[RMDB]
RNA sequence: GGGAACGACUCGAGUAGAGUCGAAAAAUCCAACGCCAGGAAGUUAUGUUCAGUCAAUUUCCCCAGACAGUAACGGUCAAGGAUUCGCACAGAGCAAUUUGUACAAUGCAUUGAACGUUUCUAGUGAGAUAGGGGAUUUAUUCGUAAAUCCCCUAUCAAAAGAAACAACAACAACAAC
Reactivity to DMS in 0.01 (KOAc 150mM, MgCl2 10mM, bicine 150mM(pH8.5), 24C), signal-to-noise 6, nucleotides 027 to 126: a100u000c020c010a110a110c150g000c050c040a070g000g010a070a070g010u010u010a050u000g010u000u010c080a110g000u000c050a060a100u000u000u000c000c000c000c100a160g000a060c080a050g010u000a020a050c060g000g000u000c020a050a060g000g000a050u000u000c140g020c050a030c030a030g000a050g020c160a060a110u000u000u000g020u000a050c050a040a040u010g010c050a100u010u010g010a060a070c090g010u000u000u000c010u000a080g020u000g000a240
Reactivity to 2A3 in 0.01 (KOAc 150mM, MgCl2 10mM, bicine 150mM(pH8.5), 24C), signal-to-noise 1, nucleotides 027 to 126: a000u050c020c010a040a020c040g020c020c020a010g040g080a070a040g060u150u060a090u140g040u080u100c080a040g040u040c010a080a100u020u030u080c010c000c020c000a000g000a070c030a010g000u060a030a010c000g010g000u010c030a000a030g050g010a030u040u030c050g070c030a050c010a030g060a010g000c010a030a110u040u050u010g030u060a050c010a040a010u020g050c020a140u030u090g020a070a000c070g000u000u040u000c020u200a050g070u010g130a100

Source information
This 177-nucleotide RNA was probed chemically with DMS and 2A3. DMS (dimethyl sulfate) methylates the pairing face of unpaired adenines and cytosines. For DMS, 6,761 sequencing reads were counted.